The data come from the RNA Mapping Database (RMDB), library RFMREP. The record gives the reactivity of an RNA of 177 nucleotides to 2A3 and DMS. Reactivities are rounded to 0.1 and cut off at 0 and 3. For 2A3, 1,958 sequencing reads were counted. The reactions ran in a buffer of 150 mM KOAc, 10 mM MgCl2 and 150 mM bicine (pH 8.5), at 24 C. DMS adducts were read by reverse transcription with MarathonRT. Reactivities are given for positions 27 through 126. For DMS, 1,152 sequencing reads were counted. High 2A3 reactivity points to a flexible backbone, as in loops and unpaired stretches.

RNA sequence: GGGAACGACUCGAGUAGAGUCGAAAAAAAAAUCGCCUUGUCGUCUCAUGCCUACGAUGGGCUAAAGAAGCACUGUGGCGAAACAUGCACUGGGUGGCCAUUGCGUCUGCGGUAGACCCGCCGAUUCGCUUAUUAGCAGGUUCGCCUGCUAAUAAGCAAAAGAAACAACAACAACAAC
Reactivity to 2A3 in 0.01 (KOAc 150mM, MgCl2 10mM, bicine 150mM(pH8.5), 24C), signal-to-noise 2, nucleotides 027 to 126: a000a000a000a000a000u050c040g000c030c000u010u040g030u030c030g070u000c020u000c040a020u120g010c020c000u070a150c090g170a160u270g000g020g000c020u020a050a100a010g030a060a000g050c100a000c040u040g030u040g110g000c020g050a040a000a000c050a070u110g000c010a010c060u080g000g000g080u100g040g090c000c020a030u030u070g030c030g000u020c020u050g040c000g020g000u020a020g050a130c000c020c010g020c020c000g010a060u150u110c030
Reactivity to DMS in 0.01 (KOAc 150mM, MgCl2 10mM, bicine 150mM(pH8.5), 24C), signal-to-noise 2, nucleotides 027 to 126: a060a060a040a120a050u000c030g000c040c020u000u000g010u010c030g010u000c000u000c060a110u020g000c030c020u000a100c080g020a110u000g000g010g020c040u000a110a080a040g020a130a080g010c150a040c060u000g010u000g060g010c030g010a030a050a060c130a030u000g010c040a010c060u000g000g000g030u000g000g000c010c020a040u000u000g000c060g010u020c100u010g000c040g020g010u000a110g010a130c140c000c010g000c030c070g000a090u020u010c160